The data come from the RNA Mapping Database (RMDB), library RNAMAK. The record gives the reactivity of an RNA of 207 nucleotides to 2A3 and DMS. The RNA was probed in 150 mM KOAc, 10 mM MgCl2 and 150 mM bicine (pH 8.5) at 24 C.

[RMDB]
RNA sequence: GGGAACGACUCGAGUAGAGUCGAAAACACUGUUCUUUCGAGAACAGUGAAAAAAACCUUUGUGACUGUUCUUCGCGAUAAGCGAGCCCAUUGGGCAUCGCUUUUGACGCGAAGGCAGUCACUCUGGUAAAAAGAAUCGAGUUUCGACUCGAUUCAAUGUUAACCGCUAAUUCGUUAGCGGUUAACAAAAAGAAACAACAACAACAAC
Reactivity to 2A3 in 0.01 (KOAc 150mM, MgCl2 10mM, bicine 150mM(pH8.5), 24C), signal-to-noise 3, nucleotides 027 to 156: c010a000c000u010g010u010u000c010u010u190u160c300g100a070g010a040a000c000a000g000u000g030a160a000a000a000a000a000a000c010c000u010u000u000g010u000g000a000c000u000g030u190u300c000u020u000c000g010c000g010a050u010a070a000g000c010g000a000g000c000c010c050a300u250u300g000g000g030c050a220u010c020g040c000u050u000u030u120g140a040c010g000c000g000a000a000g010g000c000a000g000u000c000a010c000u000c000u000g010g020u080a100a080a000a000a010g010a000a010u000c010g000a010g000u020u160u200c270g130a030c000u000c000g000a000u000u000c010a000a010
Reactivity to DMS in 0.01 (KOAc 150mM, MgCl2 10mM, bicine 150mM(pH8.5), 24C), signal-to-noise 1, nucleotides 027 to 156: c000a000c000u000g010u000u000c000u010u010u000c260g020a060g020a030a020c010a040g000u000g010a000a000a070a140a080a080a050c000c000u000u000u010g010u010g050a030c000u000g030u000u030c030u010u000c010g020c000g010a240u000a010a010g010c000g020a070g000c010c010c000a300u000u010g020g020g000c000a040u000c000g000c000u000u000u000u000g000a170c070g010c000g010a030a030g020g000c000a020g010u010c000a000c010u000c000u000g020g000u000a040a030a060a110a100g010a020a010u000c000g020a030g030u010u010u000c300g030a120c000u000c000g020a030u010u000c010a060a070